Chemical mapping of a 207-nucleotide RNA with 2A3. Conditions: 150 mM KOAc, 10 mM MgCl2 and 150 mM bicine (pH 8.5), 24 C. It was measured as part of the RMDB library OK3TST. For 2A3 the reverse transcriptase was SuperScript II with manganese. For 2A3, 464 sequencing reads were counted.

[RMDB]
RNA sequence: GGGAACGACUCGAGUAGAGUCGAAAAGAUCGCAGCCUCAACGCCACCAAUCCUACUACGCCGCUUGGCGCUUGCUGUGAGUGACCGUAUUCAAGUGCGUUUGCAUAAAUCAACAUGUUUGAAAAGUGAACCGAGGUUAUCGCACCUCCACGGCUGAGGCACGAAUGUAUUUCGAUACAUUCGUGCCAAAAGAAACAACAACAACAAC
Reactivity to 2A3 in 0.01 (KOAc 150mM, MgCl2 10mM, bicine 150mM(pH8.5), 24C), signal-to-noise 1, nucleotides 027 to 156: g170a070u060c030g040c070a000g010c000c020u080c010a070a000c010g050c000c000a100c010c010a060a100u180c000c020u060a110c050u070a080c110g090c150c090g040c160u050u100g010g000c000g000c050u120u090g000c040u000g040u080g080a040g010u150g050a060c000c000g010u060a130u010u030c090a060a020g010u000g000c080g070u070u060u060g000c030a010u030a090a170a040u190c020a070a050c050a040u100g230u160u060u060g100a090a030a000a000g080u070g020a010a000c040c090g000a000g080g000u090u020a080u220c050g080c030a000c000c010u000c020c000a030c000g020g030c010u030g060a020